RNA sequence: GGGAACGACUCGAGUAGAGUCGAAAAGACCGUUAGUUCGCUAACGGUCAAAUAAAAUCAGCGGUAAGGAGGCGUAAAAUAUUACCGCUGAACGCCUCGUUAAAAACAGGAGCUUCGGCUCCUGUAACAGAGUUCACAGAUUCGUCUGUGAACUCUGAAAAGAAACAACAACAACAAC
Reactivity to DMS in 0.01 (KOAc 150mM, MgCl2 10mM, bicine 150mM(pH8.5), 24C), signal-to-noise 1, nucleotides 027 to 126: g000a000c000c000g020u000u000a000g020u010u010c260g000c000u000a000a000c010g000g000u000c000a000a020a050u000a030a110a140a080u000c000a010g020c010g000g020u000a000a020g000g000a070g000g040c130g030u010a050a060a090a070u010a080u000u000a020c000c000g000c000u010g000a010a030c130g000c010c020u010c280g020u020u040a050a040a050a140a020c000a000g030g010a020g000c000u000u000c170g020g010c010u000c000c020u000g010u010a000a050